[RMDB]
RNA sequence: GGGAACGACUCGAGUAGAGUCGAAAAAUCGAAAGAUGAAGUAUAUGGUCUGACACCUGCCCGGUGCUGGAAGGUUAAAAGGAGUAGUUAUCUUCGGAGAAGCUAUGAAUUGAAGCCCCAGUAAACGGAACGAAACGUUUUUCGAAACGUUUCGUUCAAAAGAAACAACAACAACAAC
Reactivity to DMS in 0.01 (KOAc 150mM, MgCl2 10mM, bicine 150mM(pH8.5), 24C), signal-to-noise 3, nucleotides 027 to 126: a040u030c010g000a070a060a110g010a010u020g000a030a100g000u020a130u010a060u020g000g010u010c120u010g010a160c110a070c040c020u000g000c070c020c020g020g010u040g030c000u010g020g010a030a040g000g030u010u020a110a190a020a070g000g010a300g000u000a010g000u000u000a300u000c010u000u070c220g000g000a000g000a160a120g000c000u000a000u000g000a290a110u000u000g000a250a100g020c060c000c000c000a040g010u020a010a100a090c170g040
Reactivity to 2A3 in 0.01 (KOAc 150mM, MgCl2 10mM, bicine 150mM(pH8.5), 24C), signal-to-noise 3, nucleotides 027 to 126: a010u060c000g030a000a060a000g020a060u130g050a050a070g110u060a060u060a060u300g050g050u040c120u130g020a000c030a050c150c060u100g030c030c000c000g000g000u010g000c000u000g000g110a200a180g050g060u070u090a040a160a000a000g020g000a060g010u030a000g000u280u110a050u010c030u040u090c190g020g010a000g000a000a000g000c000u030a000u030g040a030a020u000u000g000a030a010g020c000c100c000c000a000g030u030a000a080a020c030g010
Background: Chemical mapping of a 177-nucleotide RNA with DMS and 2A3. The data come from the RNA Mapping Database (RMDB), libraries RFM100 and RFMREP.